[RMDB]
The record gives the reactivity of an RNA of 207 nucleotides to 2A3.
RNA sequence: GGGAACGACUCGAGUAGAGUCGAAAAAGCACGGUUUUUGAGGACGCAUUUUGUCCGUGCGGUAAUGCCCUCCUUUACAGUUUCUCGCAUGGUGCGGGAGUGUGGAGAGGAAACAAAAGCUAGUCUCGAUAGGCGGUUAACUUCGGUUAACCGCCAAGAUCCACGUAUCGUUCGCGAUACGUGGAUCAAAAGAAACAACAACAACAAC
Reactivity to 2A3 in 0.01 (KOAc 150mM, MgCl2 10mM, bicine 150mM(pH8.5), 24C), signal-to-noise 2, nucleotides 027 to 156: a000g000c000a000c000g010g030u000u050u000u000u020g030a060g050g010a020c040g020c110a130u000u000u000u000g010u050c000c010g000u000g000c000g040g020u140a070a010u230g000c030c000c000u030c010c010u030u100u040a040c020a030g020u060u110u010c010u000c000g010c040a080u230g170g040u170g120c020g000g000g000a000g000u030g020u010g010g010a020g010a050g060g030a030a000a000c000a000a020a000a000g060c020u070a030g030u000c000u000c010g030a090u100a120g020g000c040g010g000u000u000a000a000c000u000u050c170g030g000u000u000a010a000c030c000g000c000c000a000a000
The RNA was probed in 150 mM KOAc, 10 mM MgCl2 and 150 mM bicine (pH 8.5) at 24 C.